[RMDB]
RNA sequence: GGGAACGACUCGAGUAGAGUCGAAAAGAUAUGGACAAGUGGAGUUGUGUAUUAAGUACGUUUGACGGACCUCGGAAACGAGGUCCCGAGUACUUAAUACAAACAACGAUGAAACUUGUCCUAAGUCCGGAACUAGUCAGUUCGCUGACUAGUUCCGAAAAGAAACAACAACAACAAC
Reactivity to DMS in 0.01 (KOAc 150mM, MgCl2 10mM, bicine 150mM(pH8.5), 24C), signal-to-noise 2, nucleotides 027 to 126: g010a160u060a300u020g010g010a010c000a000a010g130u000g000g000a100g000u000u000g060u000g010u010a030u000u000a000a000g000u000a020c010g000u000u020u040g010a290c300g010g000a000c000c010u000c000g000g000a090a100a260c020g030a000g010g010u010c010c000c020g000a050g000u000a000c000u000u010a010a020u000a030c000a020a040a100c020a050a060c000g020a070u000g030a190a220a000c010u000u000g010u010c000c010u010a010a130g000u000c050
The record gives the reactivity of an RNA of 177 nucleotides to DMS. Values cover nucleotides 27 to 126. For DMS, 1,195 sequencing reads were counted.